[RMDB]
RNA sequence: GGGAACGACUCGAGUAGAGUCGAAAACGAUCAGUACGUUCGCGUACUGAUCGAAGCUACUGGAGACAGUAGCAAGUCUAAGACCUUGUUAGGCGGAAACAAGGCAUAAUGGAGGAAGGCCGGACCUCCAUACUUAGACAACCGCCAACCGGCCAACCACCGGUAUACUAUUCGUAGUAUACCGGUGAAAAGAAACAACAACAACAAC
Reactivity to DMS in 0.01 (KOAc 150mM, MgCl2 10mM, bicine 150mM(pH8.5), 24C), signal-to-noise 2, nucleotides 027 to 156: c020g010a000u000c000a010g040u000a010c010g060u000u030c300g110c000g040u000a000c000u000g030a000u020c000g000a070a100g040c000u000a000c000u000g010g040a300g040a300c030a010g000u010a010g020c000a020a180g000u030c040u010a070a110g000a160c010c000u000u000g010u010u000a070g000g000c090g080g000a300a070a010c020a100a000g000g060c000a110u000a080a080u000g000g020a020g000g040a080a080g020g010c000c000g010g010a300c010c000u000c000c020a040u000a020c040u020u000a060g010a080c000a230a140c060c040g010c070c040a080a130c000c010g000g030c000c000a080a110c200
Reactivity to 2A3 in 0.01 (KOAc 150mM, MgCl2 10mM, bicine 150mM(pH8.5), 24C), signal-to-noise 6, nucleotides 027 to 156: c010g000a000u000c000a000g000u000a000c010g010u030u100c250g000c010g100u000a000c000u000g000a000u000c000g000a000a000g000c000u000a000c000u000g000g020a060g020a040c000a000g000u010a000g000c000a000a020g000u000c000u010a000a040g020a130c000c000u000u010g020u020u040a150g050g130c100g070g060a050a010a000c000a010a010g000g090c020a120u200a170a030u070g010g000a000g010g030a100a230g010g000c010c030g050g030a220c010c000u000c000c000a000u010a020c000u000u010a010g020a030c040a070a100c100c060g070c080c000a010a020c000c010g000g000c000c000a010a010c040

Chemical mapping of a 207-nucleotide RNA with DMS and 2A3. The DMS profile rests on 2,053 reads. High DMS reactivity at an A or C suggests that its Watson-Crick edge is free. It was measured as part of the RMDB library OK3TST.